[RMDB]
RNA sequence: GGGAACGACUCGAGUAGAGUCGAAAAGAUAUGGAAAGAGCGAUAAGUCGCAUGUCGGAAACGACAUGGCGACUUUUGACGCUCUCUUCCUAAGUCAAAUCAGAGCCUGGUUCGCCAGGCUCUGAAACCUUGCAUGAACGUUCGCGUUCAUGCAAGGAAAAGAAACAACAACAACAAC
Reactivity to DMS in 0.01 (KOAc 150mM, MgCl2 10mM, bicine 150mM(pH8.5), 24C), signal-to-noise 2, nucleotides 027 to 126: g000a050u000a260u010g000g010a000a080a010g000a000g070c000g030a120u000a040a020g020u000c000g000c000a020u000g000u010c010g020g010a060a060a200c000g000a000c000a010u000g010g020c000g000a010c000u000u000u000u000g020a170c000g000c000u000c000u000c180u000u010c010c000u000a050a190g010u000c020a090a100a170u000c000a010g000a000g020c000c000u000g000g010u010u000c300g040c000c000a010g020g040c030u000c010u000g000a000a050a100

Description
The record gives the reactivity of an RNA of 177 nucleotides to DMS. Conditions: 150 mM KOAc, 10 mM MgCl2 and 150 mM bicine (pH 8.5), 24 C. The DMS profile rests on 1,296 reads. DMS adducts were read by reverse transcription with MarathonRT.